[RMDB]
RNA sequence: GGGAACGACUCGAGUAGAGUCGAAAACUUUAAAACCAGGCGUUACCAUUUCUUCUGGAAUAACAUCGACAAUGCGCCGCGCCAUUCCAUCUUCUUCAUAAAAUUGCGAUAACGUUUUAAAUGCCGCGCUUUGCAUGUAAAAAGCAUUCGGCCUAAAUACAUUGCCCUGAUUCGUCAGGGCAAUGUAAAAAGAAACAACAACAACAAC
Reactivity to 2A3 in 0.01 (KOAc 150mM, MgCl2 10mM, bicine 150mM(pH8.5), 24C), signal-to-noise 1, nucleotides 027 to 156: c000u300u000u030a000a230a000a000c010c000a010g000g010c020g110u060u080a070c070c090a090u080u070u090c040u160u030c100u050g130g010a110a070u020a090a050c050a110u130c040g050a050c070a070a110u060g010c040g050c000c000g000c000g000c000c020a110u100u000c050c000a060u000c000u110u040c020u130u050c050a100u150a110a160a060a020u080u090g000c020g000a000u030a090a020c000g000u060u070u050u160a090a210a090u050g000c010c000g000c020g000c080u040u050u030g010c040a030u080g000u100a040a020a040a040a040g030c000a010u140u190c000g030g000c000c000u040a070a050a020